[RMDB]
RNA sequence: GGGAACGACUCGAGUAGAGUCGAAAACUACAUAGUUUCGACUAUGUAGAAACCAUUAGGAAGCAUGCAGAUGCAUAUGGACGAGGGCUACUAACCUAUUGCGAACAGCAGGUUUCGACCUGCUGAAGUUGCGUAUAAGAUUCGUCUUAUACGCAACAAAAGAAACAACAACAACAAC
Reactivity to DMS in 0.01 (KOAc 150mM, MgCl2 10mM, bicine 150mM(pH8.5), 24C), signal-to-noise 9, nucleotides 027 to 126: c000u000a000c000a000u000a000g010u000u000u020c180g010a050c000u000a000u000g010u000a010g000a060a100a150c030c010a090u000u010a080g010g010a160a100g010c040a020u010g010c110a080g000a080u000g010c030a050u000a060u000g010g010a130c060g000a070g000g000g000c040u000a070c120u000a050a100c040c030u000a070u010u000g010c080g010a080a210c020a010g010c000a000g010g000u000u000u010c180g010a030c000c000u000g000c000u000g010a020a080
Reactivity to 2A3 in 0.01 (KOAc 150mM, MgCl2 10mM, bicine 150mM(pH8.5), 24C), signal-to-noise 9, nucleotides 027 to 126: c000u010a000c000a000u010a000g010u020u040u080c160g050a000c000u000a000u010g000u000a000g010a020a010a000c010c000a030u060u110a060g110g050a090a020g030c040a010u080g010c040a010g060a290u110g020c030a040u050a080u180g050g020a030c050g030a060g010g040g010c020u070a050c020u030a080a070c010c010u060a150u070u210g080c070g060a080a020c010a000g000c000a000g010g010u000u030u110c180g050a020c000c000u000g000c000u000g010a000a000